[RMDB]
RNA sequence: GGGAACGACUCGAGUAGAGUCGAAAAGUAGGAGUGAUGGCGGAACUCCUCGCGCUUGUGGAUGUUCGAGAUGUGAACCUCGAUCACCUUGCCAUCGAAGGCAUUCAACGCAUCCAGGAUGGCGACGUAGGAGCCUCCUGUUCGCAGGAGGCUCCUAAAAAGAAACAACAACAACAAC
Reactivity to 2A3 in 0.01 (KOAc 150mM, MgCl2 10mM, bicine 150mM(pH8.5), 24C), signal-to-noise 9, nucleotides 027 to 126: g190u180a020g000g030a020g010u050g050a120u100g060g070c060g020g020a010a010c000u000c010c010u000c010g020c000g010c010u090u100g060u070g110g030a060u020g020u090u090c060g030a030g010a140u130g080u090g200a070a060c010c010u010c010g000a030u030c010a060c030c040u050u140g000c020c010a020u050c050g050a070a070g020g010c040a030u080u070c050a100a030c060g000c020a010u020c010c010a030g100g070a090u080g020g010c010g010a070c040g050
Reactivity to DMS in 0.01 (KOAc 150mM, MgCl2 10mM, bicine 150mM(pH8.5), 24C), signal-to-noise 9, nucleotides 027 to 126: g010u040a040g000g010a030g010u000g000a100u020g010g010c040g010g000a180a040c010u000c000c000u000c040g020c050g010c050u000u000g010u010g000g000a050u010g010u010u010c180g000a120g010a080u010g020u020g010a100a180c110c020u000c010g000a030u000c070a090c080c030u020u020g010c020c040a060u010c060g000a110a080g000g010c060a060u010u020c120a070a200c240g000c030a030u010c020c040a070g010g010a050u000g000g000c010g000a070c170g020